[RMDB]
RNA sequence: GGGAACGACUCGAGUAGAGUCGAAAACAUCUUUCCUCCCUACACAGUGACUCCAGCUUGGGAGGGGCAGGGCUAGGCUGAGCCAGCACUCCCUGUGGUGUCUGCCUGGCACGUGCAGCUCUGGAGUAAAACCUGGAGAAGUUCGCUUCUCCAGGAACACGGGGAAGUAGUUCGCUACUUCCCCGUGAAAAGAAACAACAACAACAAC
Reactivity to 2A3 in 0.01 (KOAc 150mM, MgCl2 10mM, bicine 150mM(pH8.5), 24C), signal-to-noise 2, nucleotides 027 to 156: c000a080u060c130u080u090u080c010c010u040c000c020c000u160a130c130a080c070a170g110u090g070a030c000u000c000c000a010g000c030u030u040g000g000g000a000g000g000g000g020c000a020g000g080g000c000u010a010g010g010c010u050g030a030g040c010c010a070g100c080a090c050u210c000c040c050u090g000u030g060g030u030g200u020c020u000g000c000c000u000g000g000c050a050c140g100u070g020c010a060g020c000u040c040u090g000g000a000g000u010a010a010a020a040c000c000u000g000g000a000g000a000a000g030u100u070c120g010c150u000u000c000u000c000c000a000g000g000a000a000